[RMDB]
RNA sequence: GGGAACGACUCGAGUAGAGUCGAAAACUUGAGAUAAAAAGAGGUCUUGUUUAAUUCACUCCUUGUUCUUCCGCCAGCUAGGUAUUAAACAUGCUUCAAAUGUUACUGUUCAACUAACUAGGAAGGGGACUACUACUGGUUUCGACCAGUAGUAGUCAAAAGAAACAACAACAACAAC
Reactivity to DMS in 0.01 (KOAc 150mM, MgCl2 10mM, bicine 150mM(pH8.5), 24C), signal-to-noise 2, nucleotides 027 to 126: c030u000u010g010a130g020a140u010a050a100a090a140a110g000a090g000g000u000c050u010u000g010u000u000u000a050a060u010u000c080a100c100u000c050c030u000u000g000u000u000c060u000u000c040c060g020c130c060a030g000c030u000a030g000g020u000a070u000u000a030a040a030c030a020u000g000c050u000u000c120a010a080a060u010g010u000u000a060c090u000g000u000u010c080a050a070c080u020a040a070c080u010a110g010g010a080a070g020g000g010
Reactivity to 2A3 in 0.01 (KOAc 150mM, MgCl2 10mM, bicine 150mM(pH8.5), 24C), signal-to-noise 2, nucleotides 027 to 126: c020u070u100g070a040g030a130u160a160a200a010a040a010g050a040g050g000u020c030u140u050g060u090u060u020a040a050u180u110c070a070c130u020c000c010u000u040g030u080u020c000u090u000c010c040g050c040c010a000g040c020u030a010g000g040u040a040u020u070a030a050a020c010a000u070g020c000u090u060c030a050a090a060u150g020u070u060a100c030u070g080u070u040c020a100a040c030u070a020a060c010u010a010g040g030a050a050g010g030g040